[RMDB]
RNA sequence: GGGAACGACUCGAGUAGAGUCGAAAAGAGCUCGUUCGCGAGCUCAAAAAAACCUUUGUGUGUAACUUCUCGAUAAGAACCUUAUGCCCAUUGGGCAUAAUGUUCUUUUGACGAGGUGUUACACACUCUGGUAAAAAGGUAAGGUUCGCCUUACCAACGUUACCCAGAGUUUCGACUCUGGGUAACGAAAAGAAACAACAACAACAAC
Reactivity to 2A3 in 0.01 (KOAc 150mM, MgCl2 10mM, bicine 150mM(pH8.5), 24C), signal-to-noise 1, nucleotides 027 to 156: g030a000g030c000u000c020g010u090u100c240g030c060g120a030g000c000u020c020a000a060a000a000a020a000a060c000c000u000u020u010g000u030g000u010g000u020a030a000c000u100u080c010u010c000g050a050u000a060a000g000a000a000c000c000u000u000a010u000g010c000c010c130a300u250u300g030g020g010c010a000u000a000a000u000g000u000u010c010u030u000u000u020g100a050c030g000a000g000g000u020g000u000u010a000c000a000c000a000c000u000c000u000g000g000u140a090a000a030a060a000g000g000u020a010a000g050g040u040u080c250g130c040c010u010u010a000c050c000a030a000
An RNA of 207 nucleotides, treated with 2A3 and read out base by base. Conditions: 150 mM KOAc, 10 mM MgCl2 and 150 mM bicine (pH 8.5), 24 C. For 2A3, 1,190 sequencing reads were counted.